[RMDB]
RNA sequence: GGGAACGACUCGAGUAGAGUCGAAAACUCACCUUUCGAGGUGAGAAAAAGCGUACUACGAUUGGGAGAAUCGGACUCCCCACCACUUCCCAAAUAGGAAGUGAGGUCCAGAUUCGAGGAUCAAUCGUAUCGCAAAAAACACAGCUUCGGCUGUGAAUAGGUAACUGACAUUCGUGUCAGUUACCUAAAAAGAAACAACAACAACAAC
Reactivity to 2A3 in 0.01 (KOAc 150mM, MgCl2 10mM, bicine 150mM(pH8.5), 24C), signal-to-noise 2, nucleotides 027 to 156: c020u020c020a020c030c000u100u060u130c290g130a030g020g000u010g000a000g080a090a010a040a000a000g010c040g050u100a050c020u000a020c040g000a000u000u020g000g010g000a040g020a010a000u010c000g010g030a000c010u110c000c040c000c030a010c000c000a000c020u000u030c030c010c000a170a300a240u230a050g000g000a000a000g000u000g000a020g000g010u000c000c010a050g000a000u010u000c000g040a180g010g010a010u010c000a000a000u000c010g000u000a020u130c020g000c000a000a240a000a000a000a000c020a000c000a000g030c000u090u190c200g200g000c010u010g010u000g000a000a060
Reactivity to DMS in 0.01 (KOAc 150mM, MgCl2 10mM, bicine 150mM(pH8.5), 24C), signal-to-noise 1, nucleotides 027 to 156: c000u000c030a030c000c000u000u030u030c220g070a030g050g060u000g010a030g000a000a030a000a140a100g040c020g030u000a120c190u000a050c000g000a060u010u000g030g000g010a070g070a030a020u000c000g020g010a080c000u000c180c060c050c040a300c110c000a020c010u010u000c000c010c020a060a130a120u000a000g010g010a000a050g010u000g010a170g000g000u000c000c090a210g030a000u010u000c010g030a090g010g000a100u020c000a010a060u000c000g040u000a010u010c000g020c050a000a000a090a110a040a230c020a000c010a000g000c030u000u000c300g100g010c000u000g010u000g010a030a090
Source: RMDB library RNAMAK, as collected in RNAgym. Chemical mapping of a 207-nucleotide RNA with 2A3 and DMS. The DMS profile rests on 1,874 reads.